[RMDB]
RNA sequence: GGGAACGACUCGAGUAGAGUCGAAAACGACCGCCUGACGGGUCGGACAUAGCGUCAGGAUCAUCCGUGCCAGUCACCACGGUAAUCAUGUGUCUGAUGAUGGUUUUCCAUCUUAAUCUGACUGUGUCGUAGCAGUCUACAGUACUAUGACAUUAGACCACUAGUGCCAGUUCGCUGGCACUAGUGGAAAAGAAACAACAACAACAAC
Reactivity to 2A3 in 0.01 (KOAc 150mM, MgCl2 10mM, bicine 150mM(pH8.5), 24C), signal-to-noise 2, nucleotides 027 to 156: c000g000a000c000c000g010c040c000u000g000a000c000g010g000g000u000c020g050g050a050c080a130u160a060g070c000g000u000c010a000g000g010a030u120c010a000u060c000c000g010u000g020c040c000a000g010u000c000a000c000c000a000c000g050g080u070a020a070u090c020a020u030g010u000g010u060c020u000g040a060u040g000a000u000g020g120u050u100u220u210c010c000a000u000c000u030u130a180a110u130c160u140g040a000c000u000g010u010g010u030c030g000u000a000g000c000a030g070u020c110u110a080c120a070g100u070a130c000u030a000u030g000a010c000a070u030u090a110g020a110
Chemical mapping of a 207-nucleotide RNA with 2A3.
As a SHAPE reagent, 2A3 marks flexible, mostly unpaired nucleotides at the ribose 2'-OH.
Source: RMDB library OK3TST, as collected in RNAgym.
For 2A3, 1,219 sequencing reads were counted.
For 2A3 the reverse transcriptase was SuperScript II with manganese.